[RMDB]
Structure probing data (DMS and 2A3) for a 177-nucleotide construct.
Reactivities are given for positions 27 through 126.
For 2A3 the reverse transcriptase was SuperScript II with manganese.
It was measured as part of the RMDB library OK2TRN.
The 2A3 profile rests on 707 reads.
RNA sequence: GGGAACGACUCGAGUAGAGUCGAAAAUACAUUCCGAGGGAGAAGAUAACGAUUUGCCACGGUGCGCCACGUAAGACUUUCCCGGUGUUAAUGGCAUGACCUUUUUUCGCUACGGCAAACAGAACUCCCCAGUGGAUCUUUUCGAAGAUCCACUGGGAAAAGAAACAACAACAACAAC
Reactivity to DMS in 0.01 (KOAc 150mM, MgCl2 10mM, bicine 150mM(pH8.5), 24C), signal-to-noise 1, nucleotides 027 to 126: u030a230c220a240u000u010c010c060g010a160g010g010g000a040g000a080a030g000a120u000a060a140c070g000a080u010u000u000g010c050c010a160c100g010g010u000g030c240g000c000c010a060c170g010u010a000a010g000a100c050u000u010u000c020c010c030g020g010u010g000u000u000a050a060u000g000g040c000a030u010g010a070c110c010u040u000u030u000u000u000c040g050c020u010a120c140g010g000c030a020a000a020c050a110g000a120a090c090u000c050
Reactivity to 2A3 in 0.01 (KOAc 150mM, MgCl2 10mM, bicine 150mM(pH8.5), 24C), signal-to-noise 1, nucleotides 027 to 126: u110a000c050a010u100u130c000c030g000a080g000g040g040a040g000a220a010g040a150u170a120a090c110g040a110u050u010u110g030c080c030a040c030g020g020u090g030c050g000c010c010a040c020g050u020a080a040g040a080c000u070u060u020c000c000c000g020g000u100g000u050u080a090a030u020g000g000c040a040u140g120a180c040c100u060u090u040u040u040u060c030g050c040u020a010c070g000g030c000a080a000a000c020a040g180a090a070c000u000c000